The record gives the reactivity of an RNA of 177 nucleotides to DMS and 2A3.
The reactions ran in a buffer of 150 mM KOAc, 10 mM MgCl2 and 150 mM bicine (pH 8.5), at 24 C.
Source: RMDB library TTRDES, as collected in RNAgym.
The DMS profile rests on 1,153 reads.
For DMS the reverse transcriptase was MarathonRT.
RNA sequence: GGGAACGACUCGAGUAGAGUCGAAAAGAUAUGGAUCUCGUCCCACUACCCACCUGGGAGCUCGGAAACGAGCUUCAGAGGUGGGAGCGAGAUCCUAAGUCAAAGCCAAAGCGUUCGCGCUUUGGCACAGAUGAGUCCUGUUCGCAGGACUCAUCUGAAAAGAAACAACAACAACAAC
Reactivity to DMS in 0.01 (KOAc 150mM, MgCl2 10mM, bicine 150mM(pH8.5), 24C), signal-to-noise 1, nucleotides 027 to 126: g030a110u020a130u010g010g000a000u060c000u000c000g030u000c020c000c040a300c100u000a100c010c010c000a040c020c000u000g010g000g020a010g000c000u020c000g010g010a140a160a110c010g000a000g000c020u000u000c010a010g010a000g020g020u010g000g000g030a050g010c020g030a010g000a010u000c000c010u010a000a130g000u000c120a120a130a140g030c010c000a000a000a030g010c010g020u000u010c250g030c010g010c010u000u000u000g010g010c000a040
Reactivity to 2A3 in 0.01 (KOAc 150mM, MgCl2 10mM, bicine 150mM(pH8.5), 24C), signal-to-noise 1, nucleotides 027 to 126: g050a080u220a170u290g000g010a000u000c000u000c010g070u140c020c100c010a030c020u300a300c000c010c010a020c000c020u010g030g080g000a000g030c000u000c000g050g050a070a100a130c000g040a010g000c000u010u000c000a020g010a010g040g000u000g000g000g000a010g000c020g000a010g010a010u070c010c020u020a070a000g110u130c160a120a120a020g000c020c020a020a000a010g000c020g040u130u250c300g080c030g050c200u030u000u010g000g100c000a010

High DMS reactivity at an A or C suggests that its Watson-Crick edge is free. Reactivities are given for positions 27 through 126. 2A3 adducts were read by reverse transcription with SuperScript II with manganese.